Annotation:
This 177-nucleotide RNA was probed chemically with DMS and 2A3. The DMS profile rests on 6,808 reads. The reactions ran in a buffer of 150 mM KOAc, 10 mM MgCl2 and 150 mM bicine (pH 8.5), at 24 C.
[RMDB]
RNA sequence: GGGAACGACUCGAGUAGAGUCGAAAAACAGGUCGAUUCGUCGACCUGUACAUUGCGGCCGCCCCGGGUCGUUCCCGCGCGAAACCCGGCGCGGCCGCGCGCUUACAAACGGAUUCGUCCGUUUGAACACUUAUUGAAGUUUCGACUUCAAUAAGUGAAAAGAAACAACAACAACAAC
Reactivity to DMS in 0.01 (KOAc 150mM, MgCl2 10mM, bicine 150mM(pH8.5), 24C), signal-to-noise 5, nucleotides 027 to 126: a020c010a010g010g010u000c000g010a020u000u020c170g010u000c000g010a000c000c000u000g000u000a030c150a100u010u010g030c010g010g000c000c010g000c050c100c030c010g000g000g010u000c040g010u000u000c010c010c030g020c100g000c090g010a060a100a090c020c020c010g020g020c210g020c010g010g020c010c010g010c000g000c210g020c100u010u010a160c010a010a000a010c000g010g000a030u000u000c190g010u000c000c000g010u000u000u000g000a130a240
Reactivity to 2A3 in 0.01 (KOAc 150mM, MgCl2 10mM, bicine 150mM(pH8.5), 24C), signal-to-noise 3, nucleotides 027 to 126: a000c000a010g000g010u000c000g000a030u050u100c160g050u020c000g130a010c000c000u010g000u010a000c000a020u080u290g020c000g000g000c000c010g020c040c020c030c020g000g020g010u000c010g000u010u030c000c010c010g000c030g010c000g050a070a020a030c010c020c010g080g000c020g020c010g040g030c070c010g030c000g000c000g000c010u120u120a050c000a000a010a010c000g010g010a010u030u070c160g070u010c030c010g000u000u000u010g000a000a010